An RNA of 177 nucleotides, treated with 2A3 and DMS and read out base by base. Conditions: 150 mM KOAc, 10 mM MgCl2 and 150 mM bicine (pH 8.5), 24 C.
[RMDB]
RNA sequence: GGGAACGACUCGAGUAGAGUCGAAAAACGGGCAGUGGCGAUGGCAACGCGGCAGCCGCAGGGUCGACUUCUUCGCAGCCGCAACAGACGGGAAACGGGCAAAGAGGGGCACUCGUUCUGUUGGAAGAGGUAUUAUAUUUUUCGAAAUAUAAUACCUAAAAGAAACAACAACAACAAC
Reactivity to 2A3 in 0.01 (KOAc 150mM, MgCl2 10mM, bicine 150mM(pH8.5), 24C), signal-to-noise 9, nucleotides 027 to 126: a000c040g010g030g000c030a040g030u050g070g010c040g060a090u080g050g010c030a060a030c060g000c000g050g000c010a020g040c030c030g020c030a020g050g000g010u050c020g030a060c020u060u020c000u040u030c060g000c050a030g030c010c020g010c010a010a020c010a010g050a020c010g020g000g020a030a140a050c030g020g050g000c050a070a090a020g070a060g020g020g010g010c030a020c040u010c000g040u130u020c020u030g010u010u010g020g020a090a050g060
Reactivity to DMS in 0.01 (KOAc 150mM, MgCl2 10mM, bicine 150mM(pH8.5), 24C), signal-to-noise 7, nucleotides 027 to 126: a100c080g000g000g030c040a070g020u010g000g000c040g000a050u010g010g010c070a060a070c130g010c030g000g020c050a080g010c060c050g000c070a070g020g000g010u010c080g010a100c100u010u010c040u000u000c080g000c070a100g000c050c030g000c030a050a070c070a040g000a050c040g010g000g000a050a090a090c100g000g000g000c070a050a060a130g010a120g010g000g000g020c080a080c040u000c010g000u010u010c020u000g000u000u010g000g000a070a080g010
The 2A3 profile rests on 28,953 reads. Source: RMDB library OK1LIB, as collected in RNAgym.